[RMDB]
RNA sequence: GGGAACGACUCGAGUAGAGUCGAAAAGCGUCCUCGUUCGCGAGGACGCAAAAUAGCCAUUUGGAUCGAUGGCUUAACGAUCCGAAAAGUACAAAAGUUCAAAAACCCCACUCUUCGGAGUGGGGAAGACAGAUAAUGAGUUCGCUCAUUAUCUGUCAAAAGAAACAACAACAACAAC
Reactivity to DMS in 0.01 (KOAc 150mM, MgCl2 10mM, bicine 150mM(pH8.5), 24C), signal-to-noise 3, nucleotides 027 to 126: g000c010g000u010c000c010u000c000g010u000u000c170g030c010g000a010g010g010a000c010g020c000a000a010a060a090u020a160g000c010c010a140u020u000u010g000g000a010u000c020g010a120u000g000g020c080u000u000a040a080c050g000a040u000c000c000g010a080a040a070a110g030u000a070c180a040a090a100a140g010u010u020c080a100a060a070a100a130c010c000c000c010a010c000u000c000u000u020c190g010g000a000g020u000g020g000g010g000a000a010
Reactivity to 2A3 in 0.01 (KOAc 150mM, MgCl2 10mM, bicine 150mM(pH8.5), 24C), signal-to-noise 3, nucleotides 027 to 126: g000c000g000u010c000c010u000c000g030u060u090c210g000c010g100a010g000g000a010c000g010c000a010a000a010a000u020a000g050c000c000a070u050u030u150g010g030a010u030c010g020a050u090g050g020c020u020u020a100a030c010g000a020u000c010c000g010a070a110a030a010g080u050a050c060a070a260a040a020g030u050u160c020a050a070a100a250a300c000c030c010c000a010c000u010c000u040u090c240g110g000a000g000u000g010g000g000g000a010a000

An RNA of 177 nucleotides, treated with DMS and 2A3 and read out base by base. The RNA was probed in 150 mM KOAc, 10 mM MgCl2 and 150 mM bicine (pH 8.5) at 24 C. For DMS the reverse transcriptase was MarathonRT. 2A3 adducts were read by reverse transcription with SuperScript II with manganese. High 2A3 reactivity points to a flexible backbone, as in loops and unpaired stretches.